[RMDB]
RNA sequence: GGGAACGACUCGAGUAGAGUCGAAAAGACGUGGAGGUGUCGCGCCCUCCUUUGCGCGUAAGUACGUCGAAAUUCGGUGCUAUGGAUCGCACCGUUUGAUCCAUUAGAUAUCCGCUAUGUGCCGCGGUUGGGCAUUUACACUUACCCGAAAGGGGAAAAUCAUGGUAUUAUUCGUAAUACCAUGAUUAAAAGAAACAACAACAACAAC
Reactivity to DMS in 0.01 (KOAc 150mM, MgCl2 10mM, bicine 150mM(pH8.5), 24C), signal-to-noise 5, nucleotides 027 to 156: g010a060c030g020u000g020g010a070g020g000u000g000u000c130g020c090g010c100c020c020u000c020c010u000u000u010g020c010g010c070g010u000a060a110g030u010a050c050g000u010c050g020a070a080a120u000u010c020g010g020u010g010c010u000a300u000g010g010a120u010c070g020c050a230c090c100g020u000u000u000g000a060u000c010c010a080u000u000a070g010a120u000a080u000c030c030g030c070u000a070u000g020u000g010c030c030g020c040g010g000u000u010g000g020g020c040a070u000u000u000a080c070a080c060u000u000a160c000c020c010g000a080a050a150g000g010g000g000a050a050
Reactivity to 2A3 in 0.01 (KOAc 150mM, MgCl2 10mM, bicine 150mM(pH8.5), 24C), signal-to-noise 5, nucleotides 027 to 156: g030a010c060g020u070g020g020a040g020g040u060g010u080c020g000c000g020c020c010c000u070c010c000u040u070u080g050c060g000c010g040u060a050a070g020u040a020c030g010u010c040g040a090a010a040u110u050c000g000g010u010g000c010u000a030u100g050g020a040u060c020g020c050a100c070c040g010u040u000u080g000a000u000c000c020a020u050u120a030g070a100u070a070u090c020c010g000c030u070a050u190g040u040g020c020c020g040c050g050g000u100u050g040g000g000c020a020u060u020u050a020c050a010c020u080u100a060c000c000c020g020a070a040a030g000g000g000g000a040a120